[RMDB]
RNA sequence: GGGAACGACUCGAGUAGAGUCGAAAAGUUAAGAGAGCCGCAAGCGCAGGGAAGGCCUCCCCGCACGGGUGGGGGAAAGCGGCCGGUGCAGCGCGGGGACAGGCACUCGGGCUGGCACUGGCUGCUAGUACAAAAGUUACUUCGGUAACUUUUGUACAAAAGAAACAACAACAACAAC
Reactivity to DMS in 0.01 (KOAc 150mM, MgCl2 10mM, bicine 150mM(pH8.5), 24C), signal-to-noise 2, nucleotides 027 to 126: g030u000u010a080a090g010a160g010a120g010c020c010g000c060a110a140g000c070g000c070a040g000g010g010a130a070g000g020c090c020u000c020c010c010c030g030c090a100c140g010g000g040u000g010g000g040g020g010a040a090a060g010c010g010g020c000c000g010g020u000g000c000a040g000c000g020c000g050g000g000g010a110c120a070g020g010c110a120c000u000c010g000g000g050c000u010g000g020c010a010c020u010g000g020c000u000g000c000u000a050
Conditions: 150 mM KOAc, 10 mM MgCl2 and 150 mM bicine (pH 8.5), 24 C. The record gives the reactivity of an RNA of 177 nucleotides to DMS. Reactivities are rounded to 0.1 and cut off at 0 and 3. It was measured as part of the RMDB library RFMREP.